An RNA of 177 nucleotides, treated with DMS and 2A3 and read out base by base. For DMS the reverse transcriptase was MarathonRT. For 2A3 the reverse transcriptase was SuperScript II with manganese. Reactivities are given for positions 27 through 126. The 2A3 profile rests on 2,912 reads.
RNA sequence: GGGAACGACUCGAGUAGAGUCGAAAACACUGACGGUCACCGGAUUCAGUGGUGUUAAUGUCAAACUACGGGUUGAUUUAUCCAGACUGACAACCCAUUGGCCGCUCUGCUGGCUAUUGGACAGCACUGCUCCACUUAUAUUCGUAUAAGUGGAGCAAAAAGAAACAACAACAACAAC
Reactivity to DMS in 0.01 (KOAc 150mM, MgCl2 10mM, bicine 150mM(pH8.5), 24C), signal-to-noise 5, nucleotides 027 to 126: c060a070c110u010g000a090c040g010g000u000c020a040c250c110g010g000a100u000u000c030a030g020u000g010g020u010g010u000u000a040a060u000g020u010c010a020a030a060c050u010a130c190g020g010g010u000u010g010a080u000u000u000a030u010c040c020a150g010a080c040u000g000a040c120a090a070c060c000c010a110u010u000g000g000c010c010g000c100u000c080u000g000c030u000g010g000c030u000a090u010u000g010g010a070c020a020g000c030a090c300
Reactivity to 2A3 in 0.01 (KOAc 150mM, MgCl2 10mM, bicine 150mM(pH8.5), 24C), signal-to-noise 3, nucleotides 027 to 126: c050a020c030u050g050a030c000g040g020u070c030a010c050c090g060g010a040u120u070c020a030g010u020g010g070u070g060u000u080a170a100u170g020u020c040a050a040a030c060u150a070c210g160g060g000u050u000g040a180u070u070u090a030u020c020c020a030g130a130c020u000g000a020c020a030a050c020c030c010a010u020u020g020g000c000c000g030c080u120c110u190g000c050u050g000g000c000u080a170u070u210g020g020a030c010a020g040c010a010c080